[RMDB]
RNA sequence: GGGAACGACUCGAGUAGAGUCGAAAAAUAGAAAGUUCAAGUCUAAUAAAUAGUGAAUAAACAUAUCCAACGAAUCCUGAUAGGAUUGCAACUAAGAGAUAACACAAACCAAUCAUUUUAUGCGAAACACUUAAACACACCAAACAAAGUCAAAACAGUGUAAUUCCCUGUUCGCAGGGAAUUACACAAAAGAAACAACAACAACAAC
Reactivity to 2A3 in 0.01 (KOAc 150mM, MgCl2 10mM, bicine 150mM(pH8.5), 24C), signal-to-noise 1, nucleotides 027 to 156: a000u100a030g080a000a150a010g020u050u100c030a040a000g010u000c040u060a020a040u070a150a130a040u100a000g040u010g070a040a020u130a000a180a000c030a040u090a000u000c000c000a000a040c090g040a060a000u000c000c000u080g060a160u160a010g000g000a030u040u060g000c010a020a040c030u080a160a000g060a000g000a110u080a200a030c080a010c010a140a000a060c040c020a040a040u060c000a000u060u080u000u150a040u220g010c020g000a010a040a010c000a030c050u020u060a030a140a000c070a000c050a000c020c080a090a020a030c060a040a050a000g070u070c030a030a000a080a000c030a120